[RMDB]
RNA sequence: GGGAACGACUCGAGUAGAGUCGAAAAUAAAUUUGUAUUCGCUAAUUUGUCUAUUGGCAUCUCCUAGAACAGAAGAAGACAAUGAAUUAUCUUCACCUGUCAGAGAUGACAGUAUGAGCCAUCAGGCAGUACCUCUGUGGCACAGAGAGGACCAUGCGUACCGUGCUAAUUUCGAUUAGCACGGUACAAAAGAAACAACAACAACAAC
Reactivity to 2A3 in 0.01 (KOAc 150mM, MgCl2 10mM, bicine 150mM(pH8.5), 24C), signal-to-noise 3, nucleotides 027 to 156: u020a000a050a020u090u080u120g050u080a130u050u130c050g000c050u080a080a140u140u060u120g060u040c040u020a070u040u030g000g000c000a010u000c000u000c040c040u080a080g020a140a010c020a010g030a110a020g010a010a010g050a040c040a090a220u190g150a040a130u250u110a050u050c020u010u000c000a030c040c010u000g020u000c000a020g010a010g000a040u020g000a000c000a000g010u020a020u190g040a030g040c040c010a060u060c040a060g060g000c020a020g040u040a060c000c000u010c020u020g050u080g100g000c120a020c010a060g050a000g010a070g000g020a020c000c020a050u080g020c010
Reactivity to DMS in 0.01 (KOAc 150mM, MgCl2 10mM, bicine 150mM(pH8.5), 24C), signal-to-noise 2, nucleotides 027 to 156: u020a060a140a090u010u000u000g010u000a160u000u000c070g020c070u040a090a170u000u000u020g010u020c020u010a060u010u000g040g000c090a070u000c000u010c010c050u000a080g050a090a300c050a040g040a040a060g020a010a030g010a040c030a070a220u000g020a220a190u010u010a020u000c010u000u000c010a180c120c020u000g000u000c000a100g000a110g030a040u000g010a010c000a000g020u000a020u000g020a200g050c050c030a070u000c080a170g000g030c030a040g030u000a300c010c000u020c020u000g040u010g060g010c040a300c040a030g000a060g000a160g030g000a050c020c040a100u010g000c220